[RMDB]
RNA sequence: GGGAACGACUCGAGUAGAGUCGAAAAAGUCACACUGGCGGGACCACGAAGCAACCACAAUCGGAGACCUGGGUACAAGACACAAAACCAGGGCCCAUGGGACGAAGGUCGGGUAGAGAUUGACUUCGAUUACUGCCCAGGGACCACGGUCACCCUGGCAAUCAUAGUAGUUCGCUACUAUGAUUGCAAAAGAAACAACAACAACAAC
Reactivity to 2A3 in 0.01 (KOAc 150mM, MgCl2 10mM, bicine 150mM(pH8.5), 24C), signal-to-noise 3, nucleotides 027 to 156: a000g040u020c020a030c010a010c080u040g030g010c050g010g000g050a020c030c020a020c080g060a060a010g010c040a030a020c040c010a050c050a150a070u060c070g020g010a050g020a070c010c010u010g010g010g000u040a100c040a040a050g090a100c080a000c030a160a100a030a030c020c010a020g010g020g000c000c020c000a070u140g030g000g060a040c050g030a050a010g020g020u050c090g050g010g010u070a040g090a030g010a120u050u100g060a170c000u090u020c050g030a050u010u160a120c020u040g000c020c000c000a010g030g010g010a010c020c010a030c110g080g040u040c010a050c050c000c000u000g060
Reactivity to DMS in 0.01 (KOAc 150mM, MgCl2 10mM, bicine 150mM(pH8.5), 24C), signal-to-noise 1, nucleotides 027 to 156: a100g010u000c060a060c120a060c090u030g000g000c020g000g020g050a100c050c030a170c060g030a050a110g010c020a070a120c030c010a080c030a050a180u000c100g020g000a170g010a070c010c020u000g020g000g010u000a050c050a050a070g000a190c070a100c050a100a040a050a090c010c030a050g020g050g020c040c010c010a140u020g030g010g010a160c050g020a120a120g010g030u000c030g020g040g050u000a070g010a280g010a070u010u000g010a050c030u000u000c010g020a010u010u000a000c000u000g050c040c000c030a130g020g000g010a030c020c000a070c000g000g010u000c050a160c000c000c010u000g010